[RMDB]
RNA sequence: GGGAACGACUCGAGUAGAGUCGAAAAGAACUGACUUCGGUCAGUUCAAAAAUCCUAAGUCUUCAUCGAUCGACCACAGAGCAUCGAUCUAUCGGAAACGAUAGGGAGCUCGUGGUCGGGAGAAGAUAUGGAAAAAAGUACGUGUUCGCACGUACAAGGAUACAGAAAGUUUCGACUUUCUGUAUCCAAAAGAAACAACAACAACAAC
Reactivity to DMS in 0.01 (KOAc 150mM, MgCl2 10mM, bicine 150mM(pH8.5), 24C), signal-to-noise 2, nucleotides 027 to 156: g010a030a000c000u010g010a040c000u000u000c300g070g000u000c010a020g020u000u000c000a020a040a100a120a110u010c000c010u030a030a240g000u000c000u000u020c010a220u010c100g000a120u000c000g000a010c020c000a070c010a200g040a020g020c010a230u000c120g000a050u000c010u000a010u010c000g030g020a190a180a270c000g020a010u000a000g000g000g020a050g030c030u000c020g020u000g040g030u000c000g000g000g000a080g010a050a010g050a010u000a220u000g010g000a000a020a050a110a100a170g010u000a000c000g030u000g010u000u000c300g020c010a000c000g020u000a000c010a030a180
Reactivity to 2A3 in 0.01 (KOAc 150mM, MgCl2 10mM, bicine 150mM(pH8.5), 24C), signal-to-noise 4, nucleotides 027 to 156: g010a000a000c000u000g010a010c010u030u010c140g020g000u000c000a000g010u000u020c000a000a010a000a000a000u040c020c010u060a130a030g020u010c000u020u020c020a300u200c090g150a120u040c010g000a030c000c000a020c060a240g000a010g010c020a140u300c040g080a080u010c000u000a000u010c000g080g020a110a060a060c000g000a000u000a000g020g000g010a020g000c000u000c010g000u000g000g000u000c000g000g000g000a020g000a000a020g000a000u080a060u120g030g000a040a120a030a040a020a030g030u060a000c000g000u000g040u060u110c270g010c120a000c000g010u000a000c000a000a030